[RMDB]
RNA sequence: GGGAACGACUCGAGUAGAGUCGAAAACGUGCACACGCGCGUAGGCUUCCCCCGCAAGUCACUGUUAGCCCGCCAAGAAGCGACCCCUCCGGGGCGAGCUGAGCGGCGUGCGGCGGGGUGUCAUCCGUAACCUUACUAAGUUCGCUUAGUAAGGUUAAAAAGAAACAACAACAACAAC
Reactivity to 2A3 in 0.01 (KOAc 150mM, MgCl2 10mM, bicine 150mM(pH8.5), 24C), signal-to-noise 9, nucleotides 027 to 126: c000g010u020g020c010a100c040a050c300g000c000g000c010g020u020a040g020g000c020u120u140c000c000c000c000c000g010c030a070a070g030u150c020a010c080u060g060u180u070a030g030c000c020c010g010c010c010a080a060g090a070a010g070c030g080a150c000c000c000c010u050c050c120g080g000g010g000c010g010a010g000c000u010g010a030g010c020g000g000c010g000u010g000c000g010g000c060g000g000g010g000u020g010u000c030a050u010c000c010g010
Reactivity to DMS in 0.01 (KOAc 150mM, MgCl2 10mM, bicine 150mM(pH8.5), 24C), signal-to-noise 9, nucleotides 027 to 126: c010g030u000g010c010a170c250a120c300g010c000g020c010g010u000a070g010g000c030u000u010c030c000c010c000c010g010c020a040a020g020u000c010a080c030u010g000u020u020a050g010c000c010c000g000c000c010a090a090g000a080a030g000c070g010a280c300c040c050c000u010c080c050g010g010g000g010c000g000a120g000c000u000g000a050g010c100g000g000c010g010u000g010c000g000g000c120g010g000g000g010u000g000u000c010a090u010c010c020g000